Record summary:
This 177-nucleotide RNA was probed chemically with 2A3. Values cover nucleotides 27 to 126. 2A3 adducts were read by reverse transcription with SuperScript II with manganese. It was measured as part of the RMDB library RFM100.
RNA sequence: GGGAACGACUCGAGUAGAGUCGAAAAAGCUGGCCAUUACGAUGGCCAGCAAUGUUGUUCUGUCUGUUUCCAUAGCUUAUAUUGUAAGGUACUUAUAAGCUCGUGAACAACAGGCAGGACAACUGAAAGCCGAGAAGACAUUCGUGUCUUCUCGGCUAAAAGAAACAACAACAACAAC
Reactivity to 2A3 in 0.01 (KOAc 150mM, MgCl2 10mM, bicine 150mM(pH8.5), 24C), signal-to-noise 1, nucleotides 027 to 126: a000g000c000u000g000g000c000c010a020u000u060a140c300g010a010u000g000g000c000c000a040g000c000a000a000u090g000u000u000g000u000u000c000u000g000u000c000u000g020u000u030u000c040c020a030u050a050g000c000u000u000a050u040a030u000u220g030u030a110a250g140g140u140a090c010u000u000a000u000a000a000g000c010u000c020g060u040g000a030a000c000a050a010c000a050g010g000c000a000g050g000a000c000a000a000c000u050g000a180a010